Record summary
Structure probing data (2A3 and DMS) for a 177-nucleotide construct. 2A3 adducts were read by reverse transcription with SuperScript II with manganese. DMS (dimethyl sulfate) methylates the pairing face of unpaired adenines and cytosines. The reactions ran in a buffer of 150 mM KOAc, 10 mM MgCl2 and 150 mM bicine (pH 8.5), at 24 C. Reactivities are given for positions 27 through 126. The data come from the RNA Mapping Database (RMDB), library TTRDEL. DMS adducts were read by reverse transcription with MarathonRT.
RNA sequence: GGGAACGACUCGAGUAGAGUCGAAAAGAUAUGGAUUCCACAGCUUGGAUUUAGCAAUGCCACUCGGAAACGAGUGGUGACUUGUCAGCUGCUGGAAUCCUAAGUCAAAGCCCUGUUCGCAGGGCAAUCCUGAUACAUUCUUCGGAAUGUAUCAGGAAAAAGAAACAACAACAACAAC
Reactivity to 2A3 in 0.01 (KOAc 150mM, MgCl2 10mM, bicine 150mM(pH8.5), 24C), signal-to-noise 4, nucleotides 027 to 126: g000a000u040a020u120g000g000a000u010u000c000c000a010c010a020g030c020u260u300g200g030a180u300u300u300a060g010c080a100a080u130g000c000c000a010c000u000c000g010g040a040a030a040c010g000a000g000u000g000g000u020g010a030c030u020u010g050u090c050a020g000c000u020g000c110u000g020g000a010a000u000c000c000u000a020a010g010u010c020a080a100a030g030c000c000c000u010g020u030u160c300g020c030a000g000g000g000c010a010a010
Reactivity to DMS in 0.01 (KOAc 150mM, MgCl2 10mM, bicine 150mM(pH8.5), 24C), signal-to-noise 4, nucleotides 027 to 126: g000a030u000a300u000g010g010a010u000u000c000c000a030c020a010g000c020u010u000g040g000a020u010u010u010a030g040c050a090a080u000g000c000c000a010c000u000c000g000g000a090a090a160c010g010a010g010u000g000g010u010g010a040c030u000u000g010u000c020a030g000c000u010g030c260u000g020g010a010a010u000c000c010u000a010a060g000u000c050a080a120a150g000c000c000c000u000g000u000u020c150g010c010a010g000g000g000c010a010a010